RNA sequence: GGGAACGACUCGAGUAGAGUCGAAAACUUCAGUUGACCCGGGCAAGGUUCUAGUAGGAAGUACUAUGUGAUUUUUUUUUUUUUUUCACACUCAGAACAUAAGUGUCAAUGCUCUCGCUAUGAAGAGGAUUUACGAUAACUUCGGUUAUCGUAAAUCAAAAGAAACAACAACAACAAC
Reactivity to DMS in 0.01 (KOAc 150mM, MgCl2 10mM, bicine 150mM(pH8.5), 24C), signal-to-noise 1, nucleotides 027 to 126: c050u010u010c050a100g000u000u000g010a050c040c000c050g010g000g010c060a110a070g000g010u000u000c040u010a100g000u000a050g000g010a100a150g000u000a030c030u010a110u000g020u010g000a000u010u000u000u000u000u000u000u000u000u000u000u030u000u010u000c000a050c030a050c120u010c090a140g010a020a020c070a040u000a050a070g010u000g000u000c060a030a020u010g000c030u010c020u000c080g010c100u000a060u000g000a050a050g000a100g020
Reactivity to 2A3 in 0.01 (KOAc 150mM, MgCl2 10mM, bicine 150mM(pH8.5), 24C), signal-to-noise 1, nucleotides 027 to 126: c010u060u050c010a020g020u030u070g070a050c030c000c000g020g060g040c070a070a040g060g000u070u010c010u060a030g030u030a020g030g140a090a030g020u010a030c020u110a040u100g010u010g020a050u010u000u040u000u000u000u000u000u020u000u130u150u140u130u020c020a040c000a000c000u030c020a050g030a140a020c010a070u110a150a050g020u010g020u070c000a010a040u040g010c000u030c000u020c040g020c040u080a010u210g020a030a040g070a030g140